Chemical mapping of a 177-nucleotide RNA with 2A3 and DMS. DMS adducts were read by reverse transcription with MarathonRT. Source: RMDB library OK2TST, as collected in RNAgym. For 2A3, 1,781 sequencing reads were counted.

RNA sequence: GGGAACGACUCGAGUAGAGUCGAAAACAGAGAGGCACCGUCCCUUGCCUAACACCUCAGUUGUGAUCAGGCAGGCUGUGCUCUCAGGACAGCCCCAUUUUAGGGAUGAGGAGACUUCACCACGCCACCACUCAUACUGCUUCGGCAGUAUGAGUGGAAAAGAAACAACAACAACAAC
Reactivity to 2A3 in 0.01 (KOAc 150mM, MgCl2 10mM, bicine 150mM(pH8.5), 24C), signal-to-noise 2, nucleotides 027 to 126: c080a010g040a000g010a030g150g070c000a020c030c040g070u130c030c000c010u040u150g000c010c000u010a030a010c020a030c010c030u210c190a110g030u300u250g000u080g010a180u130c050a020g010g010c010a000g000g000c000u000g000u010g010c000u000c030u040c050a000g090g050a000c000a020g010c000c000c000c010a040u100u140u110u270a130g000g000g050a020u020g090a060g030g060a070g030a050c000u000u000c050a030c000c060a030c060g070c050c000a080
Reactivity to DMS in 0.01 (KOAc 150mM, MgCl2 10mM, bicine 150mM(pH8.5), 24C), signal-to-noise 2, nucleotides 027 to 126: c130a120g000a020g020a060g050g020c030a030c050c040g000u000c040c060c100u010u000g060c000c010u000a100a030c010a000c000c050u010c230a110g050u040u000g010u000g000a170u000c150a060g000g010c030a130g000g010c030u000g000u000g000c000u000c030u010c030a080g000g020a050c160a070g010c020c010c030c080a180u000u000u000u000a130g040g010g000a040u000g000a120g030g000a160g010a060c080u000u000c050a120c040c030a110c090g000c060c030a170